[RMDB]
RNA sequence: GGGAACGACUCGAGUAGAGUCGAAAAAGAUUGCAUUUUGUGGUGCCAGAAAUAGACAGUUCCCUUUUUAUACGCUACAUCUUUGUCAUGUAGUCAGAGACAUGCAGAUCCUUUGAAGUGAAUUCUGGCACCACAAUUUUGUAGAGACAGUCAGUGAAUCCGUCCCUAAUUUCGAUUAGGGACGGAUAAAAGAAACAACAACAACAAC
Reactivity to DMS in 0.01 (KOAc 150mM, MgCl2 10mM, bicine 150mM(pH8.5), 24C), signal-to-noise 1, nucleotides 027 to 156: a110g050a120u000u000g020c000a060u000u010u000u000g000u010g000g050u010g000c000c010a050g000a020a080a210u000a100g000a100c030a140g010u000u000c000c010c010u000u000u000u020u000a140u010a220c140g010c020u000a020c000a010u000c010u000u000u020g060u010c110a050u010g010u010a050g000u000c110a050g010a220g000a090c070a090u010g020c090a020g000a140u000c020c000u030u000u010g010a160a140g000u020g000a080a190u010u000c000u000g010g010c010a040c000c010a000c000a000a000u000u000u000u010g050u000a040g020a100g020a140c090a090g000u010c070a100g030u020g000a090
Conditions: 150 mM KOAc, 10 mM MgCl2 and 150 mM bicine (pH 8.5), 24 C. Structure probing data (DMS) for a 207-nucleotide construct. It was measured as part of the RMDB library OK3TST. The DMS profile rests on 1,935 reads.